[RMDB]
RNA sequence: GGGAACGACUCGAGUAGAGUCGAAAAUCAUUAUGAAGUGGGCUCAGAGCUGUGAUUCUGUGAGCAUGUGUGCAUGCAUGCAUGUGACCUCAUUGUCCAGUGUGGUGAAGGUGACAUUUCCAAAUCUGAGCAUUGGACAUCAGUGUGUCUGUGUCCAGGAUCCAGGAUGAUUCGUCAUCCUGGAUCCAAAAGAAACAACAACAACAAC
Reactivity to 2A3 in 0.01 (KOAc 150mM, MgCl2 10mM, bicine 150mM(pH8.5), 24C), signal-to-noise 1, nucleotides 027 to 156: u020c040a040u050u300a110u230g250a150a080g000u150g040g010g000c000u000c010a000g000a000g000c000u040g060u160g140a040u100u070c000u130g130u020g020a020g000c000a030u080g010u020g000u000g020c020a020u110g010c000a030u000g000c070a000u000g100u080g190a150c020c000u010c070a020u000u050g020u020c060c000a000g020u000g040u060g020g100u040g020a220a060g020g040u060g110a060c080a200u100u000u030c020c010a060a060a060u000c120u170g040a000g000c000a000u000u050g000g020a000c000a060u220c000a000g020u110g000u010g150u220c000u000g000u000g000u000c000c000a000
Source: RMDB library OK3TST, as collected in RNAgym. An RNA of 207 nucleotides, treated with 2A3 and read out base by base. Conditions: 150 mM KOAc, 10 mM MgCl2 and 150 mM bicine (pH 8.5), 24 C.